An RNA of 177 nucleotides, treated with 2A3 and DMS and read out base by base. The DMS profile rests on 2,854 reads. Values cover nucleotides 27 to 126. The RNA was probed in 150 mM KOAc, 10 mM MgCl2 and 150 mM bicine (pH 8.5) at 24 C. 2A3 adducts were read by reverse transcription with SuperScript II with manganese.
RNA sequence: GGGAACGACUCGAGUAGAGUCGAAAAAGACGUGAAGAUGAGUAUCUUGUAAAGAGGGAUAGGAGAAUUGGAGGGCAAGUUUGGUGCCAGCAGCCGCGGUAAUACCGACUCCAAGAGUGUGUAUGAGUCACUUGGGGACAUUCGUGUCCCCAAGUGAAAAAGAAACAACAACAACAAC
Reactivity to 2A3 in 0.01 (KOAc 150mM, MgCl2 10mM, bicine 150mM(pH8.5), 24C), signal-to-noise 2, nucleotides 027 to 126: a000g040a010c050g030u030g040a000a090g000a020u050g040a010g080u070a040u120c010u000u080g070u160a130a050a000g090a000g000g000g000a000u080a000g120g000a000g000a120a100u180u110g010g010a020g000g000g030c050a060a000g010u040u120u060g070g030u050g010c000c000a000g000c010a030g110c060c020g040c020g000g030u010a000a000u010a130c040c000g000a030c000u000c000c000a060a000g060a000g050u080g040u010g010u010a120u120g060a030g070
Reactivity to DMS in 0.01 (KOAc 150mM, MgCl2 10mM, bicine 150mM(pH8.5), 24C), signal-to-noise 2, nucleotides 027 to 126: a040g000a100c040g010u000g000a080a050g000a100u010g020a140g030u010a040u000c020u010u000g020u010a060a120a070g020a100g000g010g000a060u000a100g010g010a050g000a130a110u040u020g010g000a110g000g000g050c050a100a130g010u030u000u000g000g010u000g000c030c040a050g010c060a060g020c030c030g000c060g000g000u000a090a080u010a300c060c020g000a080c010u000c000c060a030a160g010a050g010u000g060u020g010u050a060u000g000a140g030